[RMDB]
RNA sequence: GGGAACGACUCGAGUAGAGUCGAAAACAUGGAGGUGUACCAGGUGAGGGACCCUCAUUCCCCUCCUGCCAUAGAUUGAAAAAAUUUUCCAAGAACCCAACAAUGAACUAGGUCGACACACUGCUAACGUUAGCUAAACGUUCGCGUUUAGCUAACGAAAAGAAACAACAACAACAAC
Reactivity to 2A3 in 0.01 (KOAc 150mM, MgCl2 10mM, bicine 150mM(pH8.5), 24C), signal-to-noise 1, nucleotides 027 to 126: c060a100u120g020g000a030g020g030u100g000u080a160c020c050a020g080g150u140g110a300g000g050g010a090c080c000c050u080c020a060u090u050c000c020c000c000u000c000c000u040g110c020c010a050u090a080g090a040u010u150g040a080a030a000a030a030a080u190u140u030u000c030c000a050a070g010a130a040c000c000c040a010a030c000a040a180u040g030a030a030c010u010a000g000g060u040c020g000a010c000a040c020a000c140u040g000c040u060a160a070
Reactivity to DMS in 0.01 (KOAc 150mM, MgCl2 10mM, bicine 150mM(pH8.5), 24C), signal-to-noise 1, nucleotides 027 to 126: c120a130u000g020g010a090g010g000u010g010u030a090c060c030a070g010g020u000g020a150g020g000g030a060c060c030c040u000c000a170u000u000c020c000c000c030u000c020c010u000g020c050c050a060u000a030g020a060u010u010g010a010a020a090a010a070a110u010u000u020u010c010c010a040a140g000a090a100c010c020c010a060a060c120a040a100u010g010a050a020c060u000a100g020g030u000c000g020a030c090a030c050a040c060u000g010c090u020a060a150
This 177-nucleotide RNA was probed chemically with 2A3 and DMS.
Values cover nucleotides 27 to 126.
High 2A3 reactivity points to a flexible backbone, as in loops and unpaired stretches.
Values are in units of 0.01, from 0 to 300, in steps of 10.
The DMS profile rests on 879 reads.
The 2A3 profile rests on 748 reads.
DMS adducts were read by reverse transcription with MarathonRT.
The RNA was probed in 150 mM KOAc, 10 mM MgCl2 and 150 mM bicine (pH 8.5) at 24 C.